Chemical mapping of a 177-nucleotide RNA with DMS and 2A3. Source: RMDB library M2PK50, as collected in RNAgym. The RNA was probed in 150 mM KOAc, 10 mM MgCl2 and 150 mM bicine (pH 8.5) at 24 C.
RNA sequence: GGGAACGACUCGAGUAGAGUCGAAAACAAGGACGUUUCGACGUCCUUGAUAGGACCGCCCUUUUGGGCAAAGGCCAUACGGACAGCCGGGUCCACUGCCGAACGCAAACCCCUUCGGGGGUUUGAAGUUGAUAGAGCCAUUCGUGGCUCUAUCAACAAAAGAAACAACAACAACAAC
Reactivity to DMS in 0.01 (KOAc 150mM, MgCl2 10mM, bicine 150mM(pH8.5), 24C), signal-to-noise 2, nucleotides 027 to 126: c000a010a010g000g020a010c000g010u000u000u030c150g010a030c000g030u000c020c000u010u010g020a090u010a080g000g000a020c000c020g000c030c000c000u000u000u000u010g020g020g040c000a030a020a020g000g020c000c000a050u020a050c010g000g000a010c030a170g000c020c000g010g000g010u010c010c000a120c210u030g000c020c000g000a300a070c270g000c010a010a000a010c000c000c010c000u000u010c230g010g010g020g000g000u000u000u000g000a040a070
Reactivity to 2A3 in 0.01 (KOAc 150mM, MgCl2 10mM, bicine 150mM(pH8.5), 24C), signal-to-noise 1, nucleotides 027 to 126: c030a000a000g010g020a000c020g010u050u100u180c220g070a030c000g000u060c000c000u000u000g010a000u020a000g000g020a000c000c000g060c000c000c020u230u210u220u300g040g010g000c070a140a000a040g000g010c010c000a030u020a030c000g020g020a000c000a000g020c010c000g030g020g000u000c000c000a000c030u010g050c000c010g070a090a020c050g000c070a000a000a020c050c000c000c050u030u040c120g130g000g010g000g000u000u000u010g000a010a000
Reactivities are given for positions 27 through 126.